[RMDB]
RNA sequence: GGGAACGACUCGAGUAGAGUCGAAAAGCGUACUACAGCUCGAUAGGUUCUUGGAUUUAUAGGUCUCUAGCGUGUCCCAAAUAGGAUCGGGCCUAUUGUCAGAACCUACCGAGCUGUAUCGCAAAGGCAAUUGAAAGCUUCGGCUUUCAAUUGCCAACACCAAUCAAUGGUUCGCCAUUGAUUGGUGAAAAGAAACAACAACAACAAC
Reactivity to 2A3 in 0.01 (KOAc 150mM, MgCl2 10mM, bicine 150mM(pH8.5), 24C), signal-to-noise 2, nucleotides 027 to 156: g010c020g040u080a070c060u010a000c050a000g010c000u000c010g020a020u000a000g020g000u000u020c020u140u240g200g000a070u290u300u060a020u050a000g020g020u020c020u020c110u250a060g220c030g160u210g040u100c050c020c040a120a230a150u280a070g000g010a010u030c020g000g000g000c000c000u000a010u020u000g010u000c010a000g000a000a000c000c000u000a000c030c030g000a000g030c000u000g000u000a000u020c000g010c000a050a050a050g000g000c000a000a010u000u000g000a000a000a000g000c000u050u100c270g090g000c000u000u030u000c000a000a000u010u000g000c000c000a000a000
Chemical mapping of a 207-nucleotide RNA with 2A3. For 2A3 the reverse transcriptase was SuperScript II with manganese. Conditions: 150 mM KOAc, 10 mM MgCl2 and 150 mM bicine (pH 8.5), 24 C. It was measured as part of the RMDB library RNAMAK.